[RMDB]
RNA sequence: GGGAACGACUCGAGUAGAGUCGAAAAGCCCAACUUCUAGCGUUAAGGUCCUUCGCGGGCUGAUCCGGGUUGAAGACAUUGUCAGGUGGGGAGUUUGGCUGGGGCGGCACAUCUGUUAAACCAUAACCAACAGUAACUUCUUCGGAAGUUACUGUUGAAAAGAAACAACAACAACAAC
Reactivity to 2A3 in 0.01 (KOAc 150mM, MgCl2 10mM, bicine 150mM(pH8.5), 24C), signal-to-noise 1, nucleotides 027 to 126: g060c030c000c030a030a060c030u140u080c070u040a010g030c010g030u030u080a150a010g040g000u030c010c030u000u120c110g040c130g070g040g010c020u020g000a010u050c020c000g130g000g000u080u070g020a030a000g060a030c060a160u090u220g060u080c010a020g050g000u030g070g020g000g010a040g000u130u130u130g040g040c040u040g000g000g030g000c010g030g000c000a000c000a070u040c070u110g050u050u100a080a100a040c050c000a040u040a070a050c030
Reactivity to DMS in 0.01 (KOAc 150mM, MgCl2 10mM, bicine 150mM(pH8.5), 24C), signal-to-noise 2, nucleotides 027 to 126: g000c020c010c000a150a140c130u010u020c050u000a080g010c050g020u010u020a050a240g000g020u000c010c050u010u000c150g010c120g010g030g000c040u000g000a060u000c100c030g000g000g000u000u000g020a080a100g010a130c080a070u000u000g010u000c050a070g010g030u000g010g010g000g000a090g020u000u010u000g010g000c080u010g000g000g000g000c030g010g000c050a050c090a060u000c030u000g000u000u010a040a080a150c070c060a090u010a070a120c190